[RMDB]
RNA sequence: GGGAACGACUCGAGUAGAGUCGAAAAUUAAAUGCCAUAAUGAUAUAUUGGCAGCAACAGACCCCAGUGAGGCUUUCGAGAAAUUCGUAAGUCUCUUUGCUACUUUAAUGACUUUUUCUGGUAAUGUGAAGUAAGUGGUUCGCCACUUACAAAAGAAACAACAACAACAAC
Reactivity to 2A3 in 0.01 (KOAc 150mM, MgCl2 10mM, bicine 150mM(pH8.5), 24C), signal-to-noise 9, nucleotides 027 to 129: u130u070a050a040a030u040g000c000c010a020u050a090a080u190g220a020u040a030u030a040u220u070g020g000c010a000g020c010a020a070c020a040g110a090c000c000c000c010a020g050u030g050a010g000g010c010u010u030u030c010g010a030g030a080a300a110u150u010c000g020u000a000a000g000u000c000u000c000u010u050u040g000c000u010a070c020u070u080u140a090a120u140g060a070c020u090u110u050u060u040c030u060g060g030u060a090a090u110g060u060g110a080a030
Reactivity to DMS in 0.01 (KOAc 150mM, MgCl2 10mM, bicine 150mM(pH8.5), 24C), signal-to-noise 7, nucleotides 027 to 129: u030u040a000a080a070u000g020c030c010a010u030a070a050u030g000a120u080a120u030a090u060u020g000g050c000a010g020c160a070a080c100a080g010a200c050c000c010c010a130g030u000g000a000g000g040c010u000u000u000c020g000a010g030a120a140a160u050u000c020g030u030a080a000g050u020c000u010c040u010u000u010g020c030u060a090c090u000u000u000a070a060u040g030a100c040u020u020u020u050u010c040u030g000g000u000a060a070u050g040u000g040a040a080
Background
Chemical mapping of a 170-nucleotide RNA with 2A3 and DMS. Conditions: 150 mM KOAc, 10 mM MgCl2 and 150 mM bicine (pH 8.5), 24 C. The DMS profile rests on 34,703 reads. DMS adducts were read by reverse transcription with MarathonRT. The data come from the RNA Mapping Database (RMDB), library 15KLIB.